RNA sequence: GGGAACGACUCGAGUAGAGUCGAAAACAAAAAGUCACGCGAUUUACUGGGAUAAGAUUUCUAAGUUACUUCUGCAGCAUAUAACUAAACACGUUAGUGUUCUUUAUUGUUUGGGUAAAACAGAUUUCUCUAAUAUACGGGCAAAGUUAGAAUCCCCCGGUAGAGAAGUUUUCGAACUUCUCUACCGAAAAGAAACAACAACAACAAC
Reactivity to 2A3 in 0.01 (KOAc 150mM, MgCl2 10mM, bicine 150mM(pH8.5), 24C), signal-to-noise 1, nucleotides 027 to 156: c010a000a110a050a060a040g120u110c060a030c140g060c030g040a000u100u080u100a120c060u030g000g010g000a000u060a100a090g010a060u200u130u080c000u220a080a080g060u010u070a000c010u060u080c040u080g020c000a010g000c050a060u080a000u070a250a000c040u040a030a080a020c060a030c030g120u060u090a060g000u040g010u030u090c040u070u190u090a300u050u220g050u020u050u090g040g000g060u090a040a030a020a060c040a010g030a050u070u040u000c000u020c000u030a030a190u070a060u030a170c010g000g000g000c010a040a040a120g010u070u050a030g000a060a030u000c000c030c000c010